[RMDB]
RNA sequence: GGGAACGACUCGAGUAGAGUCGAAAAACACACAGUGGUGUGCGAUGCAGCGUCUUCGGCACUGGGUAUCUGGGUGCCACCCACGCCGUCGGUAUGGCGCAACUGGGACACGAGGUCGUCGGGGUCGCCUGUAUGCAUUAUUCGUAAUGCAUACAGGAAAAGAAACAACAACAACAAC
Reactivity to DMS in 0.01 (KOAc 150mM, MgCl2 10mM, bicine 150mM(pH8.5), 24C), signal-to-noise 8, nucleotides 027 to 126: a120c050a040c040a050c060a130g030u030g000g010u010g020u000g000c060g000a060u010g010c070a100g020c060g000u010c020u000u020c060g020g000c020a050c070u000g000g000g000u020a060u030c080u010g000g010g010u000g000c040c040a120c100c010c040a100c100g010c080c030g020u000c060g000g010u020a070u020g010g010c030g010c080a070a070c110u000g000g000g000a070c090a090c070g010a080g010g010u000c040g010u000c030g010g000g000g000u000c040g010
Reactivity to 2A3 in 0.01 (KOAc 150mM, MgCl2 10mM, bicine 150mM(pH8.5), 24C), signal-to-noise 9, nucleotides 027 to 126: a000c050a000c010a000c020a060g140u130g120g030u020g080u040g060c030g030a040u070g040c050a040g020c020g050u030c020u070u060c030g030g000c020a030c060u050g010g020g070u130a100u130c050u090g060g010g030u040g050c020c010a040c010c010c000a030c030g050c060c020g040u070c030g030g080u190a150u230g040g000c020g000c020a040a050c050u050g000g000g030a030c020a010c110g030a030g010g050u050c030g020u010c020g040g000g010g000u020c010g020
The record gives the reactivity of an RNA of 177 nucleotides to DMS and 2A3. The reactions ran in a buffer of 150 mM KOAc, 10 mM MgCl2 and 150 mM bicine (pH 8.5), at 24 C. The data come from the RNA Mapping Database (RMDB), library OK1LIB. For 2A3 the reverse transcriptase was SuperScript II with manganese. For DMS the reverse transcriptase was MarathonRT.